[RMDB]
RNA sequence: GGGAACGACUCGAGUAGAGUCGAAAACAAGUGCUCAAAGGAACAUCAAGCCCCGUGAGGUGUUCACAGCCUGGCAGGGAGUCCUACACAGAAAAGGAUGCCAAGAGGCCCGCAGUUGGACAGGCGUGGGGACGCCGUUUCCCCUCCGGGCCUCAGAGUAAUGAGCUACGUUCGCGUAGCUCAUUACAAAAGAAACAACAACAACAAC
Reactivity to 2A3 in 0.01 (KOAc 150mM, MgCl2 10mM, bicine 150mM(pH8.5), 24C), signal-to-noise 2, nucleotides 027 to 156: c030a000a110g070u030g160c020u040c080a080a060a080g080g010a030a050c030a050u040c040a050a080g050c010c000c010c000g050u090g090a040g030g020u030g000u040u040c040a050c020a040g000c000c050u020g020g020c030a020g010g030g070a020g030u040c010c010u120a050c120a020c030a040g190a040a120a010a000g030g010a010u060g060c040c010a030a130g000a000g000g020c000c000c000g040c020a050g020u160u150g030g020a070c100a120g000g000c030g040u080g060g010g020g070a030c020g050c030c010g020u070u190u020c000c020c000c000u020c010c000g000g000g000c000c000u000c000a000g000a000

The record gives the reactivity of an RNA of 207 nucleotides to 2A3. The RNA was probed in 150 mM KOAc, 10 mM MgCl2 and 150 mM bicine (pH 8.5) at 24 C. The 2A3 profile rests on 999 reads. It was measured as part of the RMDB library OK3TST.